The record gives the reactivity of an RNA of 207 nucleotides to DMS and 2A3. Conditions: 150 mM KOAc, 10 mM MgCl2 and 150 mM bicine (pH 8.5), 24 C. 2A3 adducts were read by reverse transcription with SuperScript II with manganese. For 2A3, 1,205 sequencing reads were counted. It was measured as part of the RMDB library M2RFPK.
RNA sequence: GGGAACGACUCGAGUAGAGUCGAAAAGUGCCGCGUCGGCCCGGCAUGCCAACCUGAUCCGAAGUUCAAGGUGGUUUCUCUGGCCUUCCAGAGAGAUGCGCGUCGGAAGAACCGACGAACAAACCUUAAAACAAAACGACGUUCGCGUCGUUUUGAAGAAGAAACCUAAGUUCGCUUAGGUUUCUUCAAAAGAAACAACAACAACAAC
Reactivity to DMS in 0.01 (KOAc 150mM, MgCl2 10mM, bicine 150mM(pH8.5), 24C), signal-to-noise 1, nucleotides 027 to 156: g050u000g030c020c030g000c030g040u020c030g030g020c050c040c000g000g000c030a070u000g010c000c070a080a040c020c010u000g000a090u020c080c080g010a180a200g040u000u020c050a020a040g030g010u000g050g010u000u000u000c000u000c020u010g020g000c170c110u000u000c000c010a020g010a100g010a050g010a060u010g010c070g020c000g010u000c010g040g030a090a170g030a150a150c020c000g010a030c000g020a030a070c070a100a130a140c030c030u010u020a030a040a100a190c020a000a000a020a020c010g010a020c000g060u010u000c300g040c090g060u000c000g020u000u010u010u020g000a060a110
Reactivity to 2A3 in 0.01 (KOAc 150mM, MgCl2 10mM, bicine 150mM(pH8.5), 24C), signal-to-noise 2, nucleotides 027 to 156: g010u010g000c020c060g010c050g020u020c000g080g000c070c030c000g000g010c010a030u130g020c000c020a070a070c030c030u070g020a070u060c030c080g190a130a050g120u080u080c050a050a030g020g020u010g000g000u000u040u000c000u000c000u010g020g000c000c040u110u200c050c010a030g000a000g010a000g010a060u090g030c070g000c020g050u020c000g000g030a070a060g020a090a060c010c000g020a000c000g010a040a030c040a010a050a080c020c030u100u180a070a100a040a050c000a010a000a000a000c010g000a000c000g020u030u090c190g030c000g110u010c000g010u000u010u000u010g000a010a000